The record gives the reactivity of an RNA of 207 nucleotides to 2A3. It was measured as part of the RMDB library OK3TST.

[RMDB]
RNA sequence: GGGAACGACUCGAGUAGAGUCGAAAACUUCUGGCGGCGUGGCCAUGCGGAAAACCUAACAAUCGACGGAUGGGGUGUACAGGCCUCUCCACUUCUGCAUGCCGGUGCAACCAGCGGUCUAUGUCGUGGUCGGGACCUUGGUGCGGUCCGAGUGGAGGAUGUUACCAGGGUUCGCCCUGGUAACAUCAAAAGAAACAACAACAACAAC
Reactivity to 2A3 in 0.01 (KOAc 150mM, MgCl2 10mM, bicine 150mM(pH8.5), 24C), signal-to-noise 1, nucleotides 027 to 156: c050u070u060c000u000g010g000c000g030g000c000g040u090g050g100c150c060a010u030g000c000g000g020a000a030a080a110c090c110u220a170a000c120a140a100u200c050g130a090c050g010g000a050u210g140g050g000g000u180g050u150a170c210a060g300g000c000c000u000c010u030c030c000a110c030u030u050c000u010g010c000a000u010g030c020c000g030g130u240g000c000a010a060c000c000a030g000c070g070g000u020c100u130a050u150g300u100c040g070u060g060g000u010c020g070g040g000a000c000c010u050u020g000g000u060g010c030g010g030u040c070c050g010a040g010u040g000g000a110g090